Overview
An RNA of 177 nucleotides, treated with 2A3 and DMS and read out base by base. The RNA was probed in 150 mM KOAc, 10 mM MgCl2 and 150 mM bicine (pH 8.5) at 24 C. 2A3 adducts were read by reverse transcription with SuperScript II with manganese. High DMS reactivity at an A or C suggests that its Watson-Crick edge is free. The DMS profile rests on 967 reads.
[RMDB]
RNA sequence: GGGAACGACUCGAGUAGAGUCGAAAAGAGCGUCGAGAGACGAAGAGAAGUGCAUUGAUCCACAACGGAGAACGUAAUAAUGCACACCUGUGGCUUAGUGUCCGGAACAACGGGCACAAGAGGCAGACCGGUACCGUAUGUUCGCAUACGGUACCGGAAAAGAAACAACAACAACAAC
Reactivity to 2A3 in 0.01 (KOAc 150mM, MgCl2 10mM, bicine 150mM(pH8.5), 24C), signal-to-noise 1, nucleotides 027 to 126: g000a070g060c000g000u000c000g020a000g000a000g000a080c050g000a100a090g040a000g000a120a090g000u000g000c000a050u040u000g030a120u070c000c000a050c020a030a300c140g000g000a070g000a140a000c040g150u110a070a070u010a240a000u050g000c000a000c000a010c000c000u000g040u030g150g020c000u000u040a030g000u000g000u070c000c080g070g000a000a140c030a160a040c000g000g000g000c000a000c000a000a000g100a000g090g000c000a000g010a000
Reactivity to DMS in 0.01 (KOAc 150mM, MgCl2 10mM, bicine 150mM(pH8.5), 24C), signal-to-noise 1, nucleotides 027 to 126: g080a010g040c000g010u000c010g000a300g010a240g000a080c050g000a010a130g010a080g000a150a080g000u000g000c010a000u020u000g000a300u070c030c020a240c190a030a030c100g000g000a070g000a080a090c130g000u020a110a040u050a040a000u000g000c000a000c000a070c200c000u000g090u000g000g000c000u030u000a030g070u000g000u000c010c000g000g020a180a170c240a050a080c000g050g030g000c000a080c030a020a000g040a090g000g000c110a000g000a220